[RMDB]
RNA sequence: GGGAACGACUCGAGUAGAGUCGAAAAGUCGGUGGCAUGGCCUCGACGAACGCCGGCGGAUUGCGCACGGUCCGUUACGGCAACAUGGGCGAGCAGGUUGUCGGGCUAGACGUCGCGCUGCCCGACGCCCGUAAGGAUGAUUCGUCAUCCUUACGGGAAAAGAAACAACAACAACAAC
Reactivity to DMS in 0.01 (KOAc 150mM, MgCl2 10mM, bicine 150mM(pH8.5), 24C), signal-to-noise 4, nucleotides 027 to 126: g010u000c020g020g000u050g000g020c020a140u020g020g010c030c010u010c020g010a020c040g000a060a080c170g020c010c000g040g000c000g000g000a020u000u000g000c120g000c140a050c040g000g000u000c000c000g000u000u030a160c030g010g000c010a050a070c140a060u020g000g010g010c040g000a070g020c070a080g020g010u000u010g000u000c010g010g010g020c010u050a060g010a060c030g010u030c190g010c110g000c020u000g000c000c000c000g010a020c040g000
Reactivity to 2A3 in 0.01 (KOAc 150mM, MgCl2 10mM, bicine 150mM(pH8.5), 24C), signal-to-noise 9, nucleotides 027 to 126: g030u020c030g010g100u130g040g040c190a240u180g140g040c000c010u020c020g030a020c010g010a090a010c090g000c010c000g000g000c000g000g010a030u020u100g040c100g000c070a060c060g030g010u000c000c000g020u050u210a070c010g020g000c010a000a020c060a130u170g030g030g000c030g010a040g020c030a030g050g060u120u110g010u050c000g000g010g000c030u090a020g010a050c040g150u160c050g040c060g000c020u010g000c000c000c000g000a000c000g010